[RMDB]
The data come from the RNA Mapping Database (RMDB), library TTRINS.
An RNA of 177 nucleotides, treated with DMS and read out base by base.
The reactions ran in a buffer of 150 mM KOAc, 10 mM MgCl2 and 150 mM bicine (pH 8.5), at 24 C.

RNA sequence: GGGAACGACUCGAGUAGAGUCGAAAAGAUAUGGACCAGGUUAUUUAUCCCAUAGGGAGUUAUCGCUCGGAAACGAGCGUUUGCAAUAACUUUGAUCUAUAAGGGAUAAAUAACCUGGUCCUAAGUCCAUGAUAUGUCAGUUCGCUGACAUAUCAUGAAAAGAAACAACAACAACAAC
Reactivity to DMS in 0.01 (KOAc 150mM, MgCl2 10mM, bicine 150mM(pH8.5), 24C), signal-to-noise 2, nucleotides 027 to 126: g010a100u020a300u000g000g010a000c000c000a000g000g000u000u000a020u010u010u000a000u000c000c000c000a120u020a010g010g000g010a020g020u000u000a010u000c010g000c000u010c010g020g030a110a100a230c010g020a010g010c010g010u010u010u010g010c300a170a100u000a000a020c010u000u010u020g000a120u020c010u000a030u020a100a100g030g010g010a020u000a000a010a010u000a000a020c000c000u000g000g000u000c000c000u000a010a090g000u010c050